[RMDB]
RNA sequence: GGGAACGACUCGAGUAGAGUCGAAAAAUGGCCAGCAGGUCGGCGACCGGAUCGGCGGUCUGCGGGACCGUCAGCGCGACAUCGAACUGGCGUAGCCCUUCUUCGGCUAUGGCGGCGAUCAGUCCGCCUAGCCGAUUACCUUCGGGUAAUCGGCUAGAAAAGAAACAACAACAACAAC
Reactivity to DMS in 0.01 (KOAc 150mM, MgCl2 10mM, bicine 150mM(pH8.5), 24C), signal-to-noise 9, nucleotides 027 to 126: a060u010g010g010c010c010a100g010c040a060g010g010u000c010g010g010c020g010a070c100c210g010g010a300u000c060g010g000c000g010g000u000c010u000g020c090g010g010g000a030c020c000g000u000c050a100g010c070g010c070g010a050c060a080u000c040g010a090a110c010u000g000g000c010g010u000a040g000c010c000c100u000u010c180u010u010c220g010g010c030u000a030u000g010g010c000g000g000c030g000a090u010c130a130g010u000c000c000g000c010
Reactivity to 2A3 in 0.01 (KOAc 150mM, MgCl2 10mM, bicine 150mM(pH8.5), 24C), signal-to-noise 9, nucleotides 027 to 126: a000u080g030g000c010c000a010g010c030a020g020g040u020c010g040g180c020g020a050c040c120g140g050a300u060c040g070g040c000g030g010u000c000u040g040c080g030g050g010a140c010c010g010u040c020a020g010c040g050c100g040a030c010a070u090c030g030a130a120c010u030g070g000c010g000u010a020g010c000c010c000u120u110c090u120u170c060g020g000c010u020a030u050g080g030c000g010g000c000g020a070u110c040a020g030u010c000c000g000c000